Conditions: 150 mM KOAc, 10 mM MgCl2 and 150 mM bicine (pH 8.5), 24 C. The record gives the reactivity of an RNA of 207 nucleotides to 2A3. The 2A3 profile rests on 444 reads.
[RMDB]
RNA sequence: GGGAACGACUCGAGUAGAGUCGAAAAGCUACAAGACAAAUAACAUUUACAAAUGUUUCAGACGGAACAGACGGAAUUGGAAUAAAUUCAACAUCUGUUACUUAUGGUUUAUCUAAUUCAGCUGAUACGCAACCAACAUCAUGGAGCGAUAAACUCCCACCCGUGAAACGUUCGCGUUUCACGGGUGAAAAGAAACAACAACAACAAC
Reactivity to 2A3 in 0.01 (KOAc 150mM, MgCl2 10mM, bicine 150mM(pH8.5), 24C), signal-to-noise 2, nucleotides 027 to 156: g000c020u130a030c120a120a110g060a040c110a050a120a140u210a090a100c030a110u030u040u300a090c070a110a060a000u010g010u000u040u100c040a100g030a070c010g050g060a060a000c000a000g030a000c010g030g000a010a010u010u010g000g050a020a000u060a090a080a050u130u070c050a110a050c010a130u040c080u080g080u210u100a100c000u030u100a060u120g050g010u020u020u020a070u000c060u090a030a030u030u090c080a020g080c040u030g010a030u010a170c010g020c010a010a010c030c000a070a080c000a120u140c060a060u080g000g000a000g010c010g080a060u050a120a060a030c010u020c000c000